[RMDB]
RNA sequence: GGGAACGACUCGAGUAGAGUCGAAAAGCGGCCCCUCCCGAUGCAUACGGGGUCGCUCCAGGCGCCGAUGGGAUACGGCGGGUGCUCCCCCGCGCGUCCCGGCGCAGCUCGGCCGGCGUCGAUGAGGUAUCGUAAGAUCAUUCGUGAUCUUACGAUAAAAAGAAACAACAACAACAAC
Reactivity to 2A3 in 0.01 (KOAc 150mM, MgCl2 10mM, bicine 150mM(pH8.5), 24C), signal-to-noise 6, nucleotides 027 to 126: g000c000g010g010c000c010c000c000u090c020c040c020g160a170u180g070c090a060u120a230c110g000g000g000g000u000c000g000c000u010c010c020a070g010g000c000g000c010c010g130a130u260g030g010g000a010u020a050c010g020g010c000g000g010g000u080g050c030u080c000c020c000c000c000g000c000g010c000g000u010c000c000c000g000g000c000g000c000a000g000c010u070c040g070g000c010c000g020g010c010g000u020c020g020a100u130g050a030g060g070
Reactivity to DMS in 0.01 (KOAc 150mM, MgCl2 10mM, bicine 150mM(pH8.5), 24C), signal-to-noise 9, nucleotides 027 to 126: g010c010g000g000c010c000c000c000u000c030c020c030g000a110u030g020c150a100u030a100c140g000g000g000g020u000c000g010c000u000c060c060a110g000g000c010g010c000c010g010a130u040g000g000g000a050u000a020c000g000g000c000g000g000g000u030g010c140u020c140c080c000c000c000g010c000g000c000g000u000c000c010c000g010g000c060g020c040a020g000c070u010c080g000g010c050c010g000g010c020g010u000c000g000a140u020g010a110g010g010